[RMDB]
Chemical mapping of a 177-nucleotide RNA with 2A3 and DMS. For 2A3, 16,998 sequencing reads were counted.
RNA sequence: GGGAACGACUCGAGUAGAGUCGAAAAUGUGGUUCCUUCGGGAACCACACACUACCGACAAUGAUCCUCGGUAUAUAAAUCAAACCCUUGGAAACAAGGGAACACUCCCUAGCUUCGGCUAGGGAAACUCAUAAUACUACUUCGGUAGUAUUAUGAGAAAAGAAACAACAACAACAAC
Reactivity to 2A3 in 0.01 (KOAc 150mM, MgCl2 10mM, bicine 150mM(pH8.5), 24C), signal-to-noise 7, nucleotides 027 to 126: u060g010u000g000g010u000u010c010c000u020u020c220g020g000g000a000a000c000c000a000c000a000c010a000c000u040a010c000c000g020a020c050a130a300u260g030a120u140c010c020u020c030g010g040u020a030u020a010u030a230a050a030u100c100a060a060a300c000c000c000u000u000g010g010a030a040a020c000a010a000g000g000g010a010a000c010a020c010u030c000c000c000u000a010g000c000u050u040c290g090g000c000u000a000g010g000g000a010a000a000
Reactivity to DMS in 0.01 (KOAc 150mM, MgCl2 10mM, bicine 150mM(pH8.5), 24C), signal-to-noise 5, nucleotides 027 to 126: u000g020u000g010g010u000u000c000c000u000u010c220g020g010g000a000a010c000c010a000c000a010c160a110c100u000a010c000c000g000a040c300a090a110u000g010a100u000c080c080u000c000g000g000u000a020u010a060u010a050a050a060u010c220a070a090a140c010c000c010u000u000g000g000a150a140a170c000a000a000g000g010g000a040a020c170a110c120u000c000c000c000u010a010g020c000u000u010c180g020g010c000u000a010g000g000g000a000a010a030

Record summary:
The data come from the RNA Mapping Database (RMDB), library M2PK50. The reactions ran in a buffer of 150 mM KOAc, 10 mM MgCl2 and 150 mM bicine (pH 8.5), at 24 C. DMS adducts were read by reverse transcription with MarathonRT. 2A3 adducts were read by reverse transcription with SuperScript II with manganese.